Structure probing data (DMS and 2A3) for a 177-nucleotide construct.
It was measured as part of the RMDB library OK2TST.
Conditions: 150 mM KOAc, 10 mM MgCl2 and 150 mM bicine (pH 8.5), 24 C.
Reactivities are given for positions 27 through 126.
RNA sequence: GGGAACGACUCGAGUAGAGUCGAAAACGUCAAGUAGAUGUCGGCCAUGACCCGGGUCACGUGCAGCACGGCCAUCACGCUGAAAACCCCGAUCGACAUCCAAAAUCCUCGCACGCCUGAGCGUUUGGGGUUAUAGAAUAUUCGUAUUCUAUAACCCAAAAGAAACAACAACAACAAC
Reactivity to DMS in 0.01 (KOAc 150mM, MgCl2 10mM, bicine 150mM(pH8.5), 24C), signal-to-noise 8, nucleotides 027 to 126: c080g030u000c090a080a120g020u010a100g010a040u000g000u000c020g010g010c070c040a080u000g010a100c080c050c090g010g000g020u000c040a050c080g010u000g000c100a100g000c060a080c080g000g000c030c050a060u000c060a060c090g010c080u000g000a070a060a100a180c050c010c010c050g010a080u010c020g000a040c040a030u000c020c110a050a060a070a100u000c030c020u010c040g010c050a060c060g010c040c060u000g010a100g000c050g010u000u010u010g010
Reactivity to 2A3 in 0.01 (KOAc 150mM, MgCl2 10mM, bicine 150mM(pH8.5), 24C), signal-to-noise 6, nucleotides 027 to 126: c040g050u050c060a070a060g020u020a030g150a040u040g010u030c020g020g020c050c040a070u130g080a110c030c010c030g040g000g000u050c050a020c090g020u060g030c020a030g000c010a030c090g060g010c020c000a040u080c010a010c040g010c060u050g020a070a040a090a100c020c010c000c000g010a030u050c010g010a010c000a020u030c010c010a040a080a010a070u050c000c020u020c020g030c020a020c040g040c010c040u100g030a060g040c030g050u080u100u170g050